[RMDB]
RNA sequence: GGGAACGACUCGAGUAGAGUCGAAAACGCUGGGGAACUACCAAUCCGAAGUGCAACAGCUUCUGAAGCGCGCACGGAAGACAUGCAUGUAGAUUGGCCCUGUGCUGAAGCGCGCACGGCAACCGAAAGGUGCGACCCCCGGCUUUCGAGCCGGGAAGCGUUGUUAAUCGUUCGCGAUUAACAACGCAAAAGAAACAACAACAACAAC
Reactivity to 2A3 in 0.01 (KOAc 150mM, MgCl2 10mM, bicine 150mM(pH8.5), 24C), signal-to-noise 1, nucleotides 027 to 156: c010g020c010u010g030g010g000g030a080a170c070u120a130c220c010a010a010u020c050c010g120a220a080g000u010g020c090a300a030c060a300g000c000u010u000c000u020g050a170a020g030c010g000c010g000c010a010c010g020g010a000a010g060a060c090a180u300g000c000a010u300g020u120a050g010a020u010u000g010g000c010c000c000u010g030u020g000c000u060g030a190a100g000c000g020c000g020c020a010c000g020g000c010a000a040c010c000g040a030a010a000g030g000u000g010c000g030a080c010c000c000c000c000g000g000c000u050u180u070c300g050a000g000c010c000g000g000g030a010a030
Chemical mapping of a 207-nucleotide RNA with 2A3. For 2A3 the reverse transcriptase was SuperScript II with manganese. The RNA was probed in 150 mM KOAc, 10 mM MgCl2 and 150 mM bicine (pH 8.5) at 24 C. Values cover nucleotides 27 to 156.